Chemical mapping of a 170-nucleotide RNA with 2A3 and DMS.

[RMDB]
RNA sequence: GGGAACGACUCGAGUAGAGUCGAAAAUUCCUAGGCCCGGAGUCUAUCUCCAUCUGGUCCGUCCGGGCCCUCUUCGCCGGGGGAGCCCCCUCUCCAUCCCUGUCCUUCUUUCCGAGUAUUCCUUUGAUAACUAGCCGGUUCGCCGGCUAGAAAAGAAACAACAACAACAAC
Reactivity to 2A3 in 0.01 (KOAc 150mM, MgCl2 10mM, bicine 150mM(pH8.5), 24C), signal-to-noise 1, nucleotides 027 to 129: u040u020c000c000u010a050g020g020c040c000c000g030g000a010g030u050c020u100a160u030c050u040c050c040a050u020c020u090g000g010u020c050c040g030u000c000c000g010g000g000c000c000c000u040c050u090u050c020g050c030c000g000g000g000g000g000a050g000c010c010c000c000c000u030c000u000c010c000a040u050c000c000c000u010g060u040c040c000u000u040c020u030u090u020c010c000g010a020g030u050a100u040u030c030c000u050u080u110g060a030u080a100a060
Reactivity to DMS in 0.01 (KOAc 150mM, MgCl2 10mM, bicine 150mM(pH8.5), 24C), signal-to-noise 2, nucleotides 027 to 129: u000u000c010c000u030a070g020g020c010c030c070g040g000a090g020u070c090u000a140u000c070u040c050c050a060u030c000u030g060g000u000c060c040g040u020c000c000g030g000g050c090c030c010u020c020u010u040c120g050c040c050g060g010g010g030g000a110g010c000c010c010c010c010u000c040u000c030c060a140u020c050c040c040u010g040u010c060c020u020u010c010u000u000u070c020c020g050a110g020u020a150u000u000c040c030u000u000u000g020a130u080a070a080

About this RNA
2A3 adducts were read by reverse transcription with SuperScript II with manganese. The DMS profile rests on 14,329 reads.